[RMDB]
RNA sequence: GGGAACGACUCGAGUAGAGUCGAAAACAACAUACUUGCUAUACCACUCUUUAUAAGUCAUAUCGGCAGGCACGUACUCAACUUUACCUGUCUCUGGAUUCCUUGCUCUGCGCUUCAACUUGCUGUAGUCUGCGUCCUCAUCGUAUCCGACAGUAGAGUCACCUAUAAUAUUCGUAUUAUAGGUGACAAAAGAAACAACAACAACAAC
Reactivity to DMS in 0.01 (KOAc 150mM, MgCl2 10mM, bicine 150mM(pH8.5), 24C), signal-to-noise 3, nucleotides 027 to 156: c030a120a100c050a080u000a050c050u010u000g010c020u000a150u020a100c040c050a050c030u000c040u000u000u010a100u000a080a100g020u000c070a100u000a080u000c060g060g010c040a050g000g040c010a050c160g000u010a080c080u000c080a070a070c050u000u000u010a050c040c000u000g020u000c010u000c030u020g010g010a140u000u000c020c000u000u000g020c030u000c040u000g020c070g000c040u010u000c050a060a070c050u010u000g000c020u010g020u010a090g010u000c020u000g010c050g030u000c030c020u000c050a050u000c040g010u000a050u000c030c000g020a050c020a080g010u000a100g010a250
Reactivity to 2A3 in 0.01 (KOAc 150mM, MgCl2 10mM, bicine 150mM(pH8.5), 24C), signal-to-noise 9, nucleotides 027 to 156: c040a010a020c020a060u160a070c040u080u070g020c030u100a040u070a190c030c030a080c030u070c020u060u220u060a160u090a160a040g040u070c060a060u050a050u220c040g020g000c020a010g010g030c040a010c080g060u130a060c050u070c090a130a070c050u090u140u120a070c010c020u030g020u030c010u000c020u060g040g020a050u070u020c010c000u030u060g020c010u010c020u060g030c030g010c010u040u070c040a080a080c030u050u090g020c020u050g020u050a020g040u010c040u030g020c010g040u040c010c020u030c020a070u050c010g030u050a060u040c020c000g080a060c070a050g160u200a020g030a010